[RMDB]
RNA sequence: GGGAACGACUCGAGUAGAGUCGAAAAGAUAGCUCGUUCGCGAGCUAUCAAAUAGGCGCAGUGGGCUAGCGCCACUCAAAAGCCCGAAAGCAAGAGAGAGAAAAAGGUGGUCCUUCGGGACCACCAACCCAUAAGUAGACUUCGGUCUACUUAUGGGAAAAGAAACAACAACAACAAC
Reactivity to DMS in 0.01 (KOAc 150mM, MgCl2 10mM, bicine 150mM(pH8.5), 24C), signal-to-noise 2, nucleotides 027 to 126: g010a000u000a000g010c000u000c000g040u000u020c190g050c000g000a020g000c000u000a000u010c000a020a120a150u000a070g030g000c020g000c010a110g030u000g000g010g040c030u010a070g020c030g010c040c000a080c030u000c020a060a030a050a050g020c000c000c010g010a090a070a130g000c120a040a040g010a080g010a060g010a100g000a040a060a050a110a100g010g010u000g010g000u000c000c000u000u020c170g020g010g000a030c000c000a000c000c000a010a000
Reactivity to 2A3 in 0.01 (KOAc 150mM, MgCl2 10mM, bicine 150mM(pH8.5), 24C), signal-to-noise 1, nucleotides 027 to 126: g000a010u010a000g000c000u000c010g040u090u050c200g040c010g090a000g000c000u000a000u000c000a000a020a000u080a000g030g010c010g000c010a060g100u120g110g000g010c000u000a040g000c000g020c020c000a060c000u020c000a000a040a000a040g040c020c000c010g030a100a050a000g050c060a150a010g030a010g010a010g000a000g050a130a040a050a060a040g030g000u010g010g000u000c020c000u000u030c220g050g000g010a000c010c000a000c000c000a000a010